This 177-nucleotide RNA was probed chemically with 2A3 and DMS.

RNA sequence: GGGAACGACUCGAGUAGAGUCGAAAAUGUUCCGGAUUCGUCCGGAACAAAAUAUGGCACCGGUACUCGUCGAUACAAUGCCACGCAGAUGGACCGGGUGAAAAACCACUUAGUUCGCUAAGUGGAAACUCCUUACAGAGUUCGCUCUGUAAGGAGUAAAAGAAACAACAACAACAAC
Reactivity to 2A3 in 0.01 (KOAc 150mM, MgCl2 10mM, bicine 150mM(pH8.5), 24C), signal-to-noise 2, nucleotides 027 to 126: u040g000u000u000c020c010g000g000a050u040u040c150g040u000c000c000g000g030a000a000c000a000a000a000a000u120a030u030g090g000c010a010c060c020g020g010u030a100c020u030c090g050u020c030g050a000u040a230c100a210a160u160g050c030c030a050c040g050c050a040g030a070u070g010g010a020c010c010g030g000g000u020g010a050a060a010a000a040c000c000a010c000u000u000a000g000u050u020c150g020c100u010a000a000g010u000g020g000a060a000
Reactivity to DMS in 0.01 (KOAc 150mM, MgCl2 10mM, bicine 150mM(pH8.5), 24C), signal-to-noise 3, nucleotides 027 to 126: u000g000u000u000c000c010g000g010a060u000u000c220g020u000c000c020g010g000a020a010c000a020a020a050a130u020a090u010g030g010c040a090c010c010g000g000u000a040c040u000c010g010u010c030g000a150u000a070c200a110a130u000g000c080c140a060c050g000c150a090g020a050u010g000g000a040c010c010g020g000g020u000g000a020a070a060a140a130c000c000a020c000u000u000a000g010u000u020c210g010c000u000a000a020g010u000g010g000a020a040

For 2A3, 2,596 sequencing reads were counted.